[RMDB]
Chemical mapping of a 170-nucleotide RNA with DMS and 2A3. For DMS, 3,519 sequencing reads were counted. The RNA was probed in 150 mM KOAc, 10 mM MgCl2 and 150 mM bicine (pH 8.5) at 24 C.

RNA sequence: GGGAACGACUCGAGUAGAGUCGAAAAAUGAGCCUCGUGCCGAGGAGAGGCCGGAGACGGAGAGGCAGGAGGUCCCGAGGAGUAUCCAAGCAAAGAAGGGGAAGGAUCUCGAGGAAGACAUCUCCCACGAGCGUGGUCUUCGGACCACGCAAAAGAAACAACAACAACAAC
Reactivity to DMS in 0.01 (KOAc 150mM, MgCl2 10mM, bicine 150mM(pH8.5), 24C), signal-to-noise 2, nucleotides 027 to 129: a200u050g020a110g020c070c030u010c210g000u000g030c060c030g010a030g010g030a020g020a100g020g050c010c080g000g000a150g010a090c150g050g010a080g010a040g010g050c220a080g000g000a020g000g010u070c050c010c040g020a030g020g020a080g200u020a100u030c050c030a000a250g010c100a070a190a040g080a110a040g000g000g000g000a120a040g020g000a080u040c020u000c120g050a040g070g000a020a050g030a040c050a030u030c060u000c000c020c040a040c190g010a150
Reactivity to 2A3 in 0.01 (KOAc 150mM, MgCl2 10mM, bicine 150mM(pH8.5), 24C), signal-to-noise 2, nucleotides 027 to 129: a020u100g000a000g030c000c000u060c020g090u090g000c010c000g030a020g020g030a020g020a040g020g010c020c020g050g000a110g010a010c070g010g010a030g000a050g000g000c020a070g010g010a040g000g000u030c030c000c010g000a020g010g000a010g000u020a030u000c070c030a040a010g030c010a260a050a030g030a040a010g080g030g020g000a030a030g050g020a040u060c010u020c020g040a000g000g000a040a000g020a000c040a070u060c050u000c040c000c000a050c000g010a000